The record gives the reactivity of an RNA of 177 nucleotides to DMS and 2A3.
RNA sequence: GGGAACGACUCGAGUAGAGUCGAAAACAUUGAAAUUCAUGUAUAUGACAUUUACUAUGGCGAUGUAGAAGUGCUCACUGUCACAUGCGAUGCUCCAGGCACUGUGGACAUCACUGUAAAUGGAGUCACUAUGAUUACGCUUCGGCGUAAUCAUAGUAAAAGAAACAACAACAACAAC
Reactivity to DMS in 0.01 (KOAc 150mM, MgCl2 10mM, bicine 150mM(pH8.5), 24C), signal-to-noise 4, nucleotides 027 to 126: c050a120u030u050g000a060a120a050u020u000c030a040u010g020u010a050u060a020u000g000a090c050a010u010u010u000a060c010u050a090u010g010g010c160g000a040u010g030u010a080g010a110a010g000u000g020c040u000c070a120c120u010g010u000c070a030c070a070u010g030c150g020a120u000g010c090u000c140c080a120g010g000c170a020c010u000g000u030g030g000a020c040a040u030c010a030c030u000g000u000a010a110a040u000g000g000a100g000u020c130
Reactivity to 2A3 in 0.01 (KOAc 150mM, MgCl2 10mM, bicine 150mM(pH8.5), 24C), signal-to-noise 6, nucleotides 027 to 126: c070a070u140u230g120a060a090a070u140u110c040a030u060g130u120a100u060a020u230g060a020c010a030u020u000u080a070c040u040a100u120g080g050c080g060a020u110g010u020a020g000a140a000g030u010g020c040u030c080a050c050u040g040u150c030a040c000a040u100g080c050g100a080u070g000c010u000c030c010a010g030g000c040a000c040u030g030u040g050g040a090c030a070u120c000a050c000u000g020u030a000a040a010u020g020g000a030g040u050c020
High DMS reactivity at an A or C suggests that its Watson-Crick edge is free.
Reactivities are given for positions 27 through 126.
Conditions: 150 mM KOAc, 10 mM MgCl2 and 150 mM bicine (pH 8.5), 24 C.
For DMS the reverse transcriptase was MarathonRT.
For 2A3 the reverse transcriptase was SuperScript II with manganese.